[RMDB]
RNA sequence: GGGAACGACUCGAGUAGAGUCGAAAAACUGGCCGCUCUGGGGAACGUGUUGGCCUUUUGCUUGGUACGACUGUUGGAUCGCCGGGGAAUAGAGGGCGUUCACAACGGCCCCGAGUCGCUGCUGUUCAAGCACGCGGCGACUGCCUGUCACGCGUUGAAGACGUUCCAGAUUCGUCUGGAACGUCUUAAAAGAAACAACAACAACAAC
Reactivity to 2A3 in 0.01 (KOAc 150mM, MgCl2 10mM, bicine 150mM(pH8.5), 24C), signal-to-noise 2, nucleotides 027 to 156: a010c050u030g040g000c030c000g020c020u040c050u080g110g000g040g000a020a060c030g060u080g030u080u120g100g000c000c000u000u090u060u050g020c010u000u100g050g010u040a070c010g020a130c150u100g040u080u130g020g010a070u060c010g010c060c010g000g010g000g010a040a100u060a140g100a090g080g000g000c000g000u010u000c050a040c030a260a100c020g000g030c020c000c000c020g060a040g000u000c000g000c000u010g010c050u080g060u080u150c130a070a000g040c010a000c100g000c000g010g000c010g000a000c000u030g010c020c000u040g020u030c030a000c090g030c030g020u010u010g080
Chemical mapping of a 207-nucleotide RNA with 2A3. Values cover nucleotides 27 to 156. The data come from the RNA Mapping Database (RMDB), library OK3TST. The reactions ran in a buffer of 150 mM KOAc, 10 mM MgCl2 and 150 mM bicine (pH 8.5), at 24 C.